[RMDB]
RNA sequence: GGGAACGACUCGAGUAGAGUCGAAAAGAUAUGGAGAUGAUGGUCGUGAGAGCAACAGCUCGGAAACGAGACAUGCUUUCCCAUAUCUCCUAAGUCAAACAAUUUGUCUCUUCGGAGACAAAUUGAAGUCUUUCAUAAAGUUCGCUUUAUGAAAGACAAAAGAAACAACAACAACAAC
Reactivity to 2A3 in 0.01 (KOAc 150mM, MgCl2 10mM, bicine 150mM(pH8.5), 24C), signal-to-noise 5, nucleotides 027 to 126: g030a020u050a030u120g000g010a070g010a050u300g070a010u030g050g080u170c260g120u230g110a080g000a000g030c010a010a170c060a160g030c000u000c010g030g040a050a050a010c010g000a000g050a030c020a030u070g030c000u040u050u020c000c000c000a000u000a010u010c010u000c000c000u060a100a020g080u060c070a100a050a100c000a000a110u010u000u010g000u010c000u000c000u050u080c300g130g020a000g000a010c000a000a010a000u000u000g010a040a010
Reactivity to DMS in 0.01 (KOAc 150mM, MgCl2 10mM, bicine 150mM(pH8.5), 24C), signal-to-noise 6, nucleotides 027 to 126: g000a010u000a300u010g000g010a040g010a020u000g010a020u000g010g000u020c200g020u010g000a070g010a010g010c000a060a090c290a140g010c000u000c000g010g010a090a080a180c010g000a000g000a050c100a160u000g000c020u000u000u000c030c000c000a020u000a040u000c000u000c000c000u010a030a080g010u000c060a100a120a230c000a010a010u000u000u000g010u000c000u000c000u000u020c190g020g010a020g000a010c000a000a010a010u000u000g000a100a110